About this RNA
The record gives the reactivity of an RNA of 177 nucleotides to DMS. Conditions: 150 mM KOAc, 10 mM MgCl2 and 150 mM bicine (pH 8.5), 24 C. The DMS profile rests on 515 reads. For DMS the reverse transcriptase was MarathonRT.
[RMDB]
RNA sequence: GGGAACGACUCGAGUAGAGUCGAAAAUAUUUCGCGCCAUUGUAGCUCAGUGCUAGAGCGCUUCACUCGUAUAAAAAUACUGCCAUGAAGAGGACCGCGGUUCAAUCCCGCGUGGUGGCAAAAAAAACAACACUUUACCGUUCGCGGUAAAGUGUUGAAAAGAAACAACAACAACAAC
Reactivity to DMS in 0.01 (KOAc 150mM, MgCl2 10mM, bicine 150mM(pH8.5), 24C), signal-to-noise 1, nucleotides 027 to 126: u020a240u000u010u000c030g000c300g000c040c020a010u000u000g000u010a110g010c010u010c040a100g000u020g030c150u000a010g000a090g020c000g000c030u010u000c010a010c060u000c180g000u000a010u020a000a100a070a110a140u000a020c050u000g000c280c110a190u000g020a000a080g000a020g000g000a060c000c000g000c010g000g010u000u010c130a110a300u000c100c020c000g030c000g000u000g050g000u000g000g030c000a000a000a000a030a010a020a010a060